[RMDB]
Conditions: 150 mM KOAc, 10 mM MgCl2 and 150 mM bicine (pH 8.5), 24 C. This 177-nucleotide RNA was probed chemically with DMS. It was measured as part of the RMDB library TTRDES. The DMS profile rests on 788 reads. For DMS the reverse transcriptase was MarathonRT.
RNA sequence: GGGAACGACUCGAGUAGAGUCGAAAAAAAGAUAUGGAAGUGGAGAAGUACGAAGAACAGAGCUACCCACCACAGCUCGGAAACGAGCUGUGAGGCUCUGGGAGUACGUAACACUUCCUAAGUCAAACAAUCGAAGGAGGUUCGCCUCCUUCGAUUGAAAAGAAACAACAACAACAAC
Reactivity to DMS in 0.01 (KOAc 150mM, MgCl2 10mM, bicine 150mM(pH8.5), 24C), signal-to-noise 1, nucleotides 027 to 126: a100a070a120g010a030u000a230u000g000g020a030a000g020u010g030g040a130g010a180a160g000u000a010c000g020a130a160g000a150a200c030a010g000a010g010c030u000a040c020c040c090a300c100c010a000c000a010g000c050u000c000g000g030a020a040a050c020g000a070g030c000u000g000u000g000a040g010g000c000u000c000u000g000g000g000a040g000u010a000c000g020u000a070a300c010a000c000u000u000c000c000u020a000a020g020u000c030a070a100a150